[RMDB]
RNA sequence: GGGAACGACUCGAGUAGAGUCGAAAAUCUCCGGGUGGAUGCCUCGUGGUGCUACGAAUGCCUACAACUGAAAUUUGUUGUAGAUGCCUAAUGUACGUCUCUUGACGUACAUUAGAUGCCUCCAAGGGAGAGGUCAUGACUUCGGUCAUGAUCUUUCAAAAGAAACAACAACAACAAC
Reactivity to DMS in 0.01 (KOAc 150mM, MgCl2 10mM, bicine 150mM(pH8.5), 24C), signal-to-noise 9, nucleotides 027 to 126: u010c010u010c010c040g010g010g020u010g000g000a060u010g000c030c040u010c040g010u010g010g010u010g000c040u010a080c100g010a080a080u020g010c040c010u000a020c030a020a020c020u010g000a100a110a140u030u020u010g010u000u000g000u000a020g000a090u020g010c040c000u000a000a000u000g000u000a000c000g010u000c000u030c250u030u040g010a010c000g010u000a000c000a000u000u000a000g000a080u030g000c010c020u010c020c060a100a120g010g010
Reactivity to 2A3 in 0.01 (KOAc 150mM, MgCl2 10mM, bicine 150mM(pH8.5), 24C), signal-to-noise 9, nucleotides 027 to 126: u020c030u000c010c010g010g000g030u060g030g030a080u080g020c000c010u040c020g040u080g030g040u090g030c030u060a070c060g110a130a050u160g030c000c000u010a020c010a040a010c020u110g100a090a140a240u210u160u110g010u000u000g000u010a010g010a050u120g020c000c000u000a000a000u000g000u000a000c000g000u000c020u030c080u230u300g000a000c000g000u000a000c000a000u000u000a000g000a000u060g010c000c010u010c010c020a050a050g130g050
This 177-nucleotide RNA was probed chemically with DMS and 2A3. Values cover nucleotides 27 to 126. Source: RMDB library OK1LIB, as collected in RNAgym.